[RMDB]
RNA sequence: GGGAACGACUCGAGUAGAGUCGAAAAGGAAGACAACUCGCGGUCUUCCAAGUACUCGAAGGAAGGCGAGACGCACGAGUGCAGCGUCAAAUGACACCACGUCAUCCAACGCGAGAAGGUGUCAGAAGGGUACCUGGUACUUCGGUACUAGGUACCCAAAAGAAACAACAACAACAAC
Reactivity to 2A3 in 0.01 (KOAc 150mM, MgCl2 10mM, bicine 150mM(pH8.5), 24C), signal-to-noise 9, nucleotides 027 to 126: g010g010a000a010g000a000c010a070a050c020u000c010g010c010g000g000u000c000u000u000c000c000a000a000g020u030a050c020u020c060g070a090a050g100g040a070a010g060g020c030g010a040g010a030c000g050c010a050c070g130a100g150u270g050c120a030g010c030g020u020c010a050a050a090u080g000a000c000a000c010c010a030c040g060u020c040a070u070c040c060a110a050c010g010c020g000a010g020a020a050g010g000u000g000u000c000a010g080a090a100
Reactivity to DMS in 0.01 (KOAc 150mM, MgCl2 10mM, bicine 150mM(pH8.5), 24C), signal-to-noise 5, nucleotides 027 to 126: g000g010a030a000g010a020c000a040a090c000u000c000g000c020g000g000u010c000u000u000c000c000a050a080g020u010a060c040u000c040g010a080a110g000g010a070a070g000g000c020g000a090g010a020c010g030c010a120c120g010a100g050u030g020c130a110g010c020g020u000c020a070a100a110u010g000a020c000a010c020c010a260c090g010u020c040a050u020c090c080a100a120c040g000c020g000a030g040a250a110g000g010u010g000u000c000a080g000a100a130